The record gives the reactivity of an RNA of 207 nucleotides to 2A3 and DMS. High DMS reactivity at an A or C suggests that its Watson-Crick edge is free. The DMS profile rests on 5,207 reads. For 2A3 the reverse transcriptase was SuperScript II with manganese. The 2A3 profile rests on 4,726 reads. For DMS the reverse transcriptase was MarathonRT. Source: RMDB library VIROID, as collected in RNAgym.
RNA sequence: GGGAACGACUCGAGUAGAGUCGAAAAUGUAAGGCCGUGGGACCUAGACAAGUCGCUCUCUCUCUCACUAUACAUCCUCUCAGGCAUAGAGAUGACCAAUUGCGUAGGGUGUGUCCUUAAGUACACCAUUCCUAUCUAUAGUGAUGUAGGGGGGUCGGUUUAAGAGGUGGUUCGCCACCUCUUAAACAAAAGAAACAACAACAACAAC
Reactivity to 2A3 in 0.01 (KOAc 150mM, MgCl2 10mM, bicine 150mM(pH8.5), 24C), signal-to-noise 6, nucleotides 027 to 156: u150g020u060a040a040g040g010c030c030g100u130g060g030g010a070c010c010u060a060g050a100c070a110a020g080u070c020g010c030u010c000u000c000u000c000u000c000u000c020a010c000u020a020u010a030c030a060u040c040c020u010c010u030c090a120g200g000c040a100u120a090g030a000g000a020u040g040a040c040c090a120a190u200u200g030c090g010u020a010g020g020g000u030g000u000g020u030c030c030u210u230a210a050g040u060a030c010a000c000c050a030u240u190c000c010u020a030u050c020u020a020u010a020g030u020g020a040u060g100u180a020g010g010g000g000g010g010u050c040g020
Reactivity to DMS in 0.01 (KOAc 150mM, MgCl2 10mM, bicine 150mM(pH8.5), 24C), signal-to-noise 2, nucleotides 027 to 156: u000g030u000a150a100g000g030c010c040g000u000g010g020g010a030c030c020u010a150g010a130c080a090a140g020u000c040g030c010u040c030u000c010u000c010u010c010u010c040a020c020u010a070u000a040c040a140u000c010c020u000c030u000c050a210g040g020c210a170u010a120g000a060g020a070u000g020a100c120c050a070a120u000u010g000c070g010u000a040g010g010g030u000g010u000g010u000c060c090u000u020a130a160g030u000a090c030a050c030c020a120u010u000c010c000u010a060u000c030u000a010u000a020g010u010g000a060u010g020u010a030g020g000g000g030g060g020u000c070g000